[RMDB]
RNA sequence: GGGAACGACUCGAGUAGAGUCGAAAACCACUUUAUUUAUCUGCGCCUAUGAGUUACAAUCACCCAUCCUCUGCGUAAAUGCCCAUUUGACUUCCAGGAUAGCCACGUAACAAGGAAGCUGACAACAUUAAUGGGCACAGUUCGCUGUGCCCAUUAAAAAAGAAACAACAACAACAAC
Reactivity to DMS in 0.01 (KOAc 150mM, MgCl2 10mM, bicine 150mM(pH8.5), 24C), signal-to-noise 2, nucleotides 027 to 126: c000c000a120c130u030u080u020a010u060u020u030a180u060c050u000g000c040g000c000c000u040a010u000g010a130g040u000u000a140c080a110a120u030c090a000c040c000c040a120u020c020c000u000c010u020g000c030g060u040a040a100a100u010g020c010c000c010a100u030u010u010g010a120c030u000u000c030c000a030g000g000a050u000a020g010c000c030a020c070g000u040a020a090c110a090a020g000g050a010a100g000c030u000g000a110c110a190a030c170a140
Reactivity to 2A3 in 0.01 (KOAc 150mM, MgCl2 10mM, bicine 150mM(pH8.5), 24C), signal-to-noise 1, nucleotides 027 to 126: c000c000a070c000u070u160u080a180u060u220u150a140u080c040u070g020c010g010c040c020u010a030u010g020a010g130u090u110a040c060a000a010u060c000a150c090c050c050a040u050c010c010u000c010u010g000c000g040u110a170a000a000u070g000c000c000c000a050u080u040u070g070a050c000u070u000c000c000a020g070g070a070u060a110g050c020c010a050c080g090u090a120a000c000a090a090g040g000a000a020g000c010u040g040a100c030a080a000c000a070